Chemical mapping of a 177-nucleotide RNA with DMS and 2A3. For 2A3, 16,051 sequencing reads were counted.

RNA sequence: GGGAACGACUCGAGUAGAGUCGAAAAAGACAUACGUUCGCGUAUGUCUGACGGGCACCUGACCCUAAGGAAAUGCUCUAUGACAGGACACACUGAUAGUGAUACCUCGAGAUUUCGAUCUCGAGAAACUCAAAUAUUCUUUCGAGAAUAUUUGAGUAAAAGAAACAACAACAACAAC
Reactivity to DMS in 0.01 (KOAc 150mM, MgCl2 10mM, bicine 150mM(pH8.5), 24C), signal-to-noise 9, nucleotides 027 to 126: a010g000a000c000a000u000a000c000g020u000u010c220g030c010g030u000a000u000g010u000c000u000g000a080c190g010g000g010c020a060c030c020u000g000a170c030c010c010u000a070a070g000g000a080a090a090u010g010c040u000c020u000a090u010g010a110c090a060g000g000a120c080a060c050a060c060u010g010a110u010a060g010u000g010a150u010a090c160c000u000c000g000a020g000a020u000u000u010c150g010a020u000c000u000c000g000a010g000a030a060
Reactivity to 2A3 in 0.01 (KOAc 150mM, MgCl2 10mM, bicine 150mM(pH8.5), 24C), signal-to-noise 8, nucleotides 027 to 126: a000g000a000c000a000u010a000c000g030u020u080c230g000c000g120u010a000u000g000u000c000u000g000a020c020g010g000g000c020a030c040c010u040g130a160c010c000c000u040a050a030g050g030a080a110a070u120g010c010u000c030u070a140u140g110a050c030a040g030g050a060c010a010c010a010c100u080g110a170u130a100g090u050g050a070u100a140c020c000u000c000g000a010g000a000u050u080u140c190g050a020u020c000u010c000g000a000g000a010a010

For DMS the reverse transcriptase was MarathonRT. The data come from the RNA Mapping Database (RMDB), library M2PK50.